[RMDB]
RNA sequence: GGGAACGACUCGAGUAGAGUCGAAAAGGGGUCGUAAGCGGAUCUUGGAUUUAAGUAGCUUUUGACGAGCUGAAGCCUCCACGGCUCGAUAAGCUACUUUGUCAGAUCGCUUACGACGGAGGCACCCAAAAGCAGUGAAGAUUCGUCUUCACUGCAACAGUUAUCUGCCGUUCGCGGCAGAUAACUGAAAAGAAACAACAACAACAAC
Reactivity to 2A3 in 0.01 (KOAc 150mM, MgCl2 10mM, bicine 150mM(pH8.5), 24C), signal-to-noise 1, nucleotides 027 to 156: g100g000g030g010u000c030g010u000a000a000g050c120g160g110a080u020c100u180u300g120g000a070u060u300u020a010a000g000u000a030g000c000u090u060u210u200g200a180c070g000a000g000c020u060g070a110a050g050c000c010u070c010c010a020c000g000g000c000u000c010g080a130u050a120a030g020c000u000a010c100u000u010u000g110u050c000a000g000a040u000c000g000c000u000u000a000c000g000a000c010g000g010a000g000g010c040a050c000c000c000a000a110a000a060g000c000a000g000u000g010a000a000g000a000u060u160c190g020u000c080u000u000c000a000c000u000g040c000a000a000
Chemical mapping of a 207-nucleotide RNA with 2A3. Values cover nucleotides 27 to 156.